[RMDB]
RNA sequence: GGGAACGACUCGAGUAGAGUCGAAAAACAAGAAUAGUAUGUAAAAAGCACAACUGGUUUGAUUAUCCGUCAAGGAAAUGACAAAAACAAAAGCAUAUUCAUGUACACUUUGAAUAACUUUUGAAGGAAAAAUACACUCAUUCGUGAGUGUAUUUUUAAAAGAAACAACAACAACAAC
Reactivity to 2A3 in 0.01 (KOAc 150mM, MgCl2 10mM, bicine 150mM(pH8.5), 24C), signal-to-noise 2, nucleotides 027 to 126: a000c030a050a000g070a100a040u130a160g020u040a070u140g000u050a130a120a100a050a040g050c040a040c000a030a170c030u060g080g060u050u060u030g090a080u000u090a040u060c030c030g060u040c070a090a100g110g060a060a080a090u090g030a010c060a020a110a010a010a000c030a000a050a000a010g050c030a040u030a000u080u020c010a010u030g050u110a070c150a040c170u040u010u010g010a000a010u020a020a000c010u000u050u010u100g080a070a080g030g070
Reactivity to DMS in 0.01 (KOAc 150mM, MgCl2 10mM, bicine 150mM(pH8.5), 24C), signal-to-noise 3, nucleotides 027 to 126: a090c060a060a070g010a080a070u010a050g010u000a050u000g010u010a040a100a070a100a130g000c060a030c030a010a080c050u010g010g000u000u020u000g000a150u000u000a090u010c030c030g010u010c140a090a130g010g010a020a050a050u010g000a070c140a030a070a040a110a150c010a000a010a010a020g000c070a080u000a020u000u000c010a020u000g010u020a100c280a090c190u000u000u000g010a030a010u000a010a150c000u000u000u000u000g010a100a090g020g010
Record summary:
An RNA of 177 nucleotides, treated with 2A3 and DMS and read out base by base. It was measured as part of the RMDB library OK2TRN. The reactions ran in a buffer of 150 mM KOAc, 10 mM MgCl2 and 150 mM bicine (pH 8.5), at 24 C. For DMS the reverse transcriptase was MarathonRT. For 2A3 the reverse transcriptase was SuperScript II with manganese.